[RMDB]
RNA sequence: GGGAACGACUCGAGUAGAGUCGAAAAAUAACUCACAGAAAGAGGACAGUGCUGCAUUUUGUCUAUGUACCGAAACUCAGACUGGUGAGUUGUCUUAUUUAUUGACAUUGCGGUAGCUAUGGGCUCACUUAUGUCAGCGAUUCGUCGCUGACAUAAGAAAAGAAACAACAACAACAAC
Reactivity to 2A3 in 0.01 (KOAc 150mM, MgCl2 10mM, bicine 150mM(pH8.5), 24C), signal-to-noise 3, nucleotides 027 to 126: a010u060a020a030c020u040c000a020c000a040g070a030a140a000g010a000g070g010a010c050a010g030u020g070c050u030g020c030a050u110u140u120u170g100u080c060u070a040u050g030u010a040c020c010g070a130a090a030c020u010c010a020g040a140c020u080g120g080u040g080a010g000u000u020g000u000c000u070u170a300u170u180u050a150u100u100g030a030c020a010u030u070g050c030g100g080u060a040g010c040u030a050u120g000g030g080c020u000c010a050
Reactivity to DMS in 0.01 (KOAc 150mM, MgCl2 10mM, bicine 150mM(pH8.5), 24C), signal-to-noise 3, nucleotides 027 to 126: a030u010a020a040c020u000c020a020c020a050g000a030a250a210g010a020g000g000a160c140a070g010u000g010c090u000g000c020a100u010u010u000u000g010u010c160u000a030u000g010u000a030c050c050g000a080a120a110c010u000c010a030g000a300c030u000g000g020u000g010a020g010u000u000g000u000c040u010u010a070u030u000u000a100u030u000g010a060c040a060u000u000g010c050g010g020u000a040g030c060u000a070u000g000g020g000c040u000c080a120